[RMDB]
Chemical mapping of a 207-nucleotide RNA with 2A3. Conditions: 150 mM KOAc, 10 mM MgCl2 and 150 mM bicine (pH 8.5), 24 C. Source: RMDB library OK3TST, as collected in RNAgym.

RNA sequence: GGGAACGACUCGAGUAGAGUCGAAAAGGUCGAGAUUUGCACUUGUGCCGCAAUGGAGAACGAGGAAGAUGUGACAACUGUUGCAGCGUCAACAUCACGGGCGGGGACAAGAAUACCACACCCUCCCGCCGCUGCACCCGUGGAAGAGAUCGCACAGCUUAGGUACGUGCUUCGGCACGUACCUAAGAAAAGAAACAACAACAACAAC
Reactivity to 2A3 in 0.01 (KOAc 150mM, MgCl2 10mM, bicine 150mM(pH8.5), 24C), signal-to-noise 2, nucleotides 027 to 156: g010g000u010c070g010a010g000a150u080u100u060g000c020a000c060u060u100g050u090g030c020c040g000c000a030a010u070g020g000a040g030a040a020c130g020a040g050g010a070a070g010a090u150g050u030g070a090c070a200a020c160u080g020u090u050g030c050a030g030c000g030u070c060a060a130c000a210u170c070a010c020g000g010g010c020g000g000g000g050a030c030a050a030g120a020a060u180a100c040c130a000c000a020c050c000c000u000c000c000c010g000c000c040g010c000u000g030c000a030c000c040c000g000u010g050g000a050a050g020a010g010a080u080c090g000c070a010c000a060g090